[RMDB]
RNA sequence: GGGAACGACUCGAGUAGAGUCGAAAAGAAUUGGUAUGUAAGCUACAUCUUCCGGUAGCUGCGUCACACUUUAAGAGUGUGCAUACUGAGCCGAAGCUCAGCUUCGGUCCCCCAAGGGAAGCACAAACCGGCGAUGCGUAUUCGUACGCAUCGCCGGAAAAGAAACAACAACAACAAC
Reactivity to 2A3 in 0.01 (KOAc 150mM, MgCl2 10mM, bicine 150mM(pH8.5), 24C), signal-to-noise 1, nucleotides 027 to 126: g120a000a010u000u000g000g090u000a000u020g000u000a000a060g000c000u000a000c000a150u030c000u020u000c000c040g020g000u000a000g000c000u000g000c000g000u000c000a000c000a000c000u040u270u300a300a090g130a000g210u000g000u000g070c000a000u000a000c000u000g000a000g080c060c000g000a010a010g000c010u130c300a000g000c000u020u000c000g070g000u000c010c010c010c010c010a000a030g030g000g000a000a000g000c000a000c010a130a060a060
This 177-nucleotide RNA was probed chemically with 2A3. 2A3 adducts were read by reverse transcription with SuperScript II with manganese. The 2A3 profile rests on 471 reads.